Chemical mapping of a 177-nucleotide RNA with 2A3 and DMS. DMS adducts were read by reverse transcription with MarathonRT. The DMS profile rests on 5,235 reads. The RNA was probed in 150 mM KOAc, 10 mM MgCl2 and 150 mM bicine (pH 8.5) at 24 C.

RNA sequence: GGGAACGACUCGAGUAGAGUCGAAAACGGCUAGCUAAUCGCGCGAUAUCGCGUAGCCGGCCGCGAUAUGCAUGCUAUACGAUCGCGGCUAUACGUAUAAUCGGCAUCGCGGCUAUAUAUAGCGCGCGAGAUGAUAGGUCUUCGGACCUAUCAUCUCAAAAGAAACAACAACAACAAC
Reactivity to 2A3 in 0.01 (KOAc 150mM, MgCl2 10mM, bicine 150mM(pH8.5), 24C), signal-to-noise 5, nucleotides 027 to 126: c030g060g020c050u050a020g010c040u070a110a060u160c030g000c000g010c010g020a020u030a000u080c020g000c020g040u020a070g010c010c000g020g000c000c000g000c010g000a010u060a060u160g110c130a060u110g040c030u170a060u030a250c110g040a020u010c030g010c010g070g000c020u030a040u000a040c020g050u090a050u050a200a100u120c020g000g000c020a010u040c010g000c010g000g030c070u020a020u000a000u020a000u030a290g010c030g000c010g010c030
Reactivity to DMS in 0.01 (KOAc 150mM, MgCl2 10mM, bicine 150mM(pH8.5), 24C), signal-to-noise 5, nucleotides 027 to 126: c070g000g000c030u010a030g010c040u000a130a130u000c050g020c000g000c040g010a060u000a040u020c060g020c010g020u000a260g020c030c040g020g010c040c000g010c010g000a010u000a030u010g010c050a060u010g030c160u000a050u000a080c020g000a070u000c030g010c010g000g020c030u000a050u010a040c160g010u010a070u010a100a140u010c040g000g020c020a290u000c010g010c000g000g000c070u010a070u000a070u010a080u000a060g010c010g010c020g030c270

Notes:
The data come from the RNA Mapping Database (RMDB), library OK2TRN. 2A3 adducts were read by reverse transcription with SuperScript II with manganese.